Record summary:
Chemical mapping of a 177-nucleotide RNA with 2A3 and DMS. The RNA was probed in 150 mM KOAc, 10 mM MgCl2 and 150 mM bicine (pH 8.5) at 24 C. 2A3 adducts were read by reverse transcription with SuperScript II with manganese. DMS adducts were read by reverse transcription with MarathonRT.
[RMDB]
RNA sequence: GGGAACGACUCGAGUAGAGUCGAAAAAGGUAGUUAUCAACGUUUGGUGGCGCAGUACGAGGAGGAGCUACAGCAGCAGCAACUCCGUGCAGCAGAGCUGGUGAGGACCGCUGCUGAGAAUGGCAGAGCAUUAGUGCUACUUCGGUAGCACUAAUGCAAAAGAAACAACAACAACAAC
Reactivity to 2A3 in 0.01 (KOAc 150mM, MgCl2 10mM, bicine 150mM(pH8.5), 24C), signal-to-noise 3, nucleotides 027 to 126: a000g130g000u070a030g010u070u020a080u060c030a090a050c110g030u030u040u080g050g000u060g030g020c050g000c030a010g050u050a030c030g010a030g000g020a000g020g000a020g010c000u040a070c020a070g020c050a000g000c010a000g020c000a010a050c000u000c010c010g020u120g040c000a030g000c010a010g030a020g170c030u100g040g090u100g060a180g060g000a000c000c060g000c020u000g000c010u000g050a060g010a040a180u150g020g000c050a020g010a020
Reactivity to DMS in 0.01 (KOAc 150mM, MgCl2 10mM, bicine 150mM(pH8.5), 24C), signal-to-noise 3, nucleotides 027 to 126: a040g010g000u000a090g020u010u010a010u010c060a090a070c140g000u020u000u010g000g000u020g010g020c040g030c030a040g040u000a070c080g000a070g020g020a070g000g000a210g030c030u000a060c060a120g010c030a030g030c010a040g020c010a120a160c040u000c010c030g040u050g030c000a060g030c030a160g010a180g040c000u000g000g000u020g000a110g030g000a090c230c150g000c000u000g000c010u000g010a020g020a050a060u000g000g000c010a060g000a100